[RMDB]
RNA sequence: GGGAACGACUCGAGUAGAGUCGAAAAAACUAAUUAUAUAGAGGAUAUGUCUCAAUUUGUUCUGCAUUAAUGCCACAGUGGGGAUGGAGGCCAGGCCGUGGCCAGAGCAGAUACGUAGGCCCAUGAACAUGUCAUAUUUCUUCGGAAAUAUGACAUGAAAAGAAACAACAACAACAAC
Reactivity to 2A3 in 0.01 (KOAc 150mM, MgCl2 10mM, bicine 150mM(pH8.5), 24C), signal-to-noise 2, nucleotides 027 to 126: a000a030c120u150a120a100u300u110a200u140a110u230a290g030a050g030g000a050u060a050u300g130u020c000u000c020a050a060u060u050u150g010u030u020c010u000g000c000a100u140u100a230a050u230g000c000c000a000c000a000g040u050g010g110g000g000a020u080g060g110a080g180g000c000c000a020g060g000c030c010g040u050g000g000c010c000a000g000a000g000c020a000g010a050u040a090c030g010u010a030g060g000c000c000c000a090u080g060a000a030
Reactivity to DMS in 0.01 (KOAc 150mM, MgCl2 10mM, bicine 150mM(pH8.5), 24C), signal-to-noise 2, nucleotides 027 to 126: a060a040c040u020a030a060u020u010a190u000a240u000a210g010a060g010g000a140u000a050u000g000u000c050u000c010a080a070u000u000u000g010u000u000c030u000g010c120a130u000u000a080a080u000g030c010c020a030c040a100g020u010g010g000g010g010a080u010g000g010a090g000g000c010c020a040g000g010c050c050g030u000g030g010c040c050a080g000a070g010c020a020g000a020u010a030c100g010u000a080g000g000c010c020c030a070u010g000a060a160
Source: RMDB library RFMREP, as collected in RNAgym. The record gives the reactivity of an RNA of 177 nucleotides to 2A3 and DMS. The DMS profile rests on 1,806 reads. For 2A3, 1,288 sequencing reads were counted. For 2A3 the reverse transcriptase was SuperScript II with manganese. The RNA was probed in 150 mM KOAc, 10 mM MgCl2 and 150 mM bicine (pH 8.5) at 24 C.